[RMDB]
RNA sequence: GGGAACGACUCGAGUAGAGUCGAAAAAAAGGUAGCAUAAUCACUUGUUCUCCAAAUAAGGACUUGUAUGAAUGGCCACACGAGGGUUUUACUGUCUCUUACUUCCAAUCAGUGAAAUUAACCUUCCCGUGAAGAGGCGGGAAUAAAAAAAUAAGACGAUAAUUAUCAUCUUCGGAUGAUAAUUAUCAAAAGAAACAACAACAACAAC
Reactivity to 2A3 in 0.01 (KOAc 150mM, MgCl2 10mM, bicine 150mM(pH8.5), 24C), signal-to-noise 5, nucleotides 027 to 156: a000a000a000g070g000u040a030g010c030a040u050a080a070u130c010a020c030u040u060g010u050u030c030u020c030c020a080a100a130u150a080a060g030g000a020c020u040u040g030u070a050u080g070a100a030u060g020g020c030c020a020c010a010c060g040a100g010g010g010u000u020u040u070a030c020u010g020u020c000u000c000u070u090a140c050u090u020c030c030a040a100u060c020a060g040u020g080a050a080a110u100u040a070a060c010c010u010u010c010c000c000g010u030g040a110a140g040a040g110g000c010g020g010g000a010a010u080a020a020a000a000a000a000a020u140a050a020g040a010c040
Reactivity to DMS in 0.01 (KOAc 150mM, MgCl2 10mM, bicine 150mM(pH8.5), 24C), signal-to-noise 1, nucleotides 027 to 156: a000a020a080g010g020u000a010g010c040a070u010a140a090u020c050a120c020u000u000g020u000u000c010u000c000c030a100a100a140u010a050a030g010g000a030c010u010u000g010u010a100u010g010a120a050u000g010g020c000c030a060c060a050c040g000a120g050g010g030u000u000u000u000a040c030u010g000u000c060u000c010u000u000a080c120u020u010c060c000a050a110u010c080a060g010u020g010a080a060a050u020u000a090a100c050c090u000u000c000c020c010g000u000g010a080a150g020a160g000g000c000g010g000g010a020a050u000a010a040a040a050a050a050a040u010a020a120g000a100c080